[RMDB]
RNA sequence: GGGAACGACUCGAGUAGAGUCGAAAAUGUUUGGUUGGACCUGACGAUCCUUUUUUUAUUCUUGUUGAAGCUCAAAACAGGAACCACAUGCCAAUCUACUUUUUGACCAGCGGCGCAGUUAGAGUCCUCACCCCAAUUGGUUCGCCAAUUGGGGUGAAAAAGAAACAACAACAACAAC
Reactivity to DMS in 0.01 (KOAc 150mM, MgCl2 10mM, bicine 150mM(pH8.5), 24C), signal-to-noise 1, nucleotides 027 to 126: u000g000u000u000u000g010g020u010u010g010g000a190c040c090u030g000a110c230g010a230u000c000c000u000u000u000u000u020u000u100a100u020u000c010u000u040g000u030u010g010a010a140g010c250u000c190a020a020a020a030c110a010g030g000a020a080c120c030a100c110a090u010g000c010c010a010a010u000c000u000a030c070u010u000u000u000u000g010a090c040c040a120g040c100g010g000c030g030c110a020g030u010u000a090g020a130g000u000c000c030

Annotation
This 177-nucleotide RNA was probed chemically with DMS.